Chemical mapping of a 177-nucleotide RNA with 2A3 and DMS.
[RMDB]
RNA sequence: GGGAACGACUCGAGUAGAGUCGAAAACACUUUGGGGACCUGCUGAGCAUGCAUCGUUGGCACCCAAAAAUAUUGUGGCCAUGACAAUAUUGGAUUCAUGCUUUAAAAUCUCAGGAAGUAUUUUAAAGCCGUAAUAGUACUUCGGUACUAUUACGGCAAAAGAAACAACAACAACAAC
Reactivity to 2A3 in 0.01 (KOAc 150mM, MgCl2 10mM, bicine 150mM(pH8.5), 24C), signal-to-noise 4, nucleotides 027 to 126: c070a010c040u050u120u120g030g000g010g050a030c020c010u020g020c080u110g040a010g010c010a040u030g000c020a010u050c020g070u080u070g030g010c040a180c000c000c070a030a000a010a030a000u170a060u070u050g010u060g060g020c090c020a040u120g010a050c040a020a070u040a040u100u040g040g010a050u030u060c000a010u120g000c000u010u030u050a060a110a010a030u050c030u010c010a000g010g070a090a040g090u050a170u050u100u010u120a080a100a000
Reactivity to DMS in 0.01 (KOAc 150mM, MgCl2 10mM, bicine 150mM(pH8.5), 24C), signal-to-noise 2, nucleotides 027 to 126: c050a010c090u010u010u040g000g000g030g000a100c050c060u040g000c170u020g000a050g000c050a030u000g000c070a040u010c020g020u020u000g000g020c210a040c010c020c030a030a000a130a000a010u000a000u000u000g010u000g020g000c100c050a120u030g010a110c000a000a010u020a010u030u000g000g030a180u000u020c060a010u010g000c000u000u000u030a100a020a100a100u030c010u000c060a100g000g010a070a050g000u040a030u020u000u000u010a000a170a130

DMS adducts were read by reverse transcription with MarathonRT. 2A3 adducts were read by reverse transcription with SuperScript II with manganese. The reactions ran in a buffer of 150 mM KOAc, 10 mM MgCl2 and 150 mM bicine (pH 8.5), at 24 C.